[RMDB]
RNA sequence: GGGAACGACUCGAGUAGAGUCGAAAACGAGAUCGGCGGGGGCGACUUCGGGUACGGGCAGAACUACACAGAGGAUCUGGUCAAGGGGCUCUUCCACGUGCCCCUGGCCACUCCCCUGAAUGCUGUAGAGGUUCUGACGCAGCAGCUUUCGCGGCUGGAUUGUGCCAGUAUUCGUACUGGCACAAUCAAAAGAAACAACAACAACAAC
Reactivity to 2A3 in 0.01 (KOAc 150mM, MgCl2 10mM, bicine 150mM(pH8.5), 24C), signal-to-noise 2, nucleotides 027 to 156: c030g020a000g020a090u070c020g020g060c110g030g040g000g040g020c030g070a040c070u140u150c090g070g010g070u090a030c010g030g060g080c010a000g000a050a000c020u030a040c020a010c000a010g000a000g020g000a020u000c040u010g000g030u030c080a100a080g020g000g000g000c000u020c030u300u230c040c040a060c050g000u020g000c000c000c010c010u000g010g000c020c000a000c000u000c010c000c000c000u010g040a140a090u200g040c080u040g020u070a060g050a130g080g040u020u040c010u060g030a020c050g040c050a040g020c010a000g010c000u050u090u170c080g020c090g080g000c040u050g000